Source information: This 207-nucleotide RNA was probed chemically with DMS. DMS adducts were read by reverse transcription with MarathonRT. It was measured as part of the RMDB library OK3TST. The DMS profile rests on 3,026 reads. The RNA was probed in 150 mM KOAc, 10 mM MgCl2 and 150 mM bicine (pH 8.5) at 24 C.

RNA sequence: GGGAACGACUCGAGUAGAGUCGAAAAAUUGUAUUAGUCCAGAUUCUCUAGAGAAACAGAACCAAUAGGGGCUGUGUGUGUGUGUGUGUUUGUGUGUGUGUGUUUGUACACACACACAGAAGAGAGAGACUUUAAGAAAUUGGCUCCUGAGAUCAUAAAAAUGCUAAUCGUUCGCGAUUAGCAUUUUAAAAGAAACAACAACAACAAC
Reactivity to DMS in 0.01 (KOAc 150mM, MgCl2 10mM, bicine 150mM(pH8.5), 24C), signal-to-noise 1, nucleotides 027 to 156: a120u000u010g020u020a160u010u000a030g000u010c000c030a150g010a100u010u000c060u000c000u000a140g010a180g010a110a060a170c040a160g020a040a040c010c020a040a130u010a130g020g000g010g030c010u010g010u000g010u000g000u000g000u010g020u000g000u000g000u000g020u010u000u010g010u000g010u040g060u020g000u000g020u010g060u020u000u000g000u000a040c000a010c000a020c020a010c000a020c000a010g010a050a080g000a070g020a100g020a140g010a070c040u000u000u000a080a210g020a060a070a120u000u000g010g010c010u010c020c020u000g010a090g020a060u000c030a100u010a030